[RMDB]
RNA sequence: GGGAACGACUCGAGUAGAGUCGAAAAGGAUGUCGACCCCUGCACUGACUAUUGGAUAAAGACUUCUUUCAACUAAGAGAAGAUGCAAAUCAGCACACUUUUUUCUUUGUUCUGCCAGCUUCCAGGCCUAAGACUAGGUUUUGCUGUCUACAGCCAACCGUAGAGUAUCAUUCGUGAUACUCUACGGAAAAGAAACAACAACAACAAC
Reactivity to 2A3 in 0.01 (KOAc 150mM, MgCl2 10mM, bicine 150mM(pH8.5), 24C), signal-to-noise 4, nucleotides 027 to 156: g060g000a040u100g010u050c020g050a070c000c000c000c010u020g040c030a060c030u040g070a060c040u070a140u100u120g050g000a050u130a100a120a030g040a060c000u010u040c000u010u130u060c090a140a130c090u200a130a000g030a000g010a080a010g020a020u040g040c040a020a100a230u120c060a080g030c020a010c010a050c040u080u050u010u000u100u050c010u080u050u000g030u050u030c030u040g030c010c020a000g010c030u080u020c040c040a060g030g000c020c000u020a070a010g030a040c050u050a050g050g000u040u060u120u130g010c000u010g000u020c010u030a070c030a070g050c100c020a040a040
Reactivity to DMS in 0.01 (KOAc 150mM, MgCl2 10mM, bicine 150mM(pH8.5), 24C), signal-to-noise 2, nucleotides 027 to 156: g000g050a070u000g000u000c010g000a240c040c000c030c050u020g020c090a070c040u000g000a100c030u000a130u000u000g010g000a090u000a070a080a040g000a120c090u000u010c020u000u000u010c030a070a200c140u000a050a130g010a030g030a020a040g000a110u010g010c060a080a100a160u000c090a060g000c040a060c110a070c030u000u010u000u010u000u010c010u000u000u000g020u010u000c060u000g010c000c000a120g000c030u000u000c030c030a140g000g000c030c010u000a040a090g010a080c090u000a080g030g010u000u000u000u000g010c000u000g000u000c010u020a060c090a130g010c020c030a030a210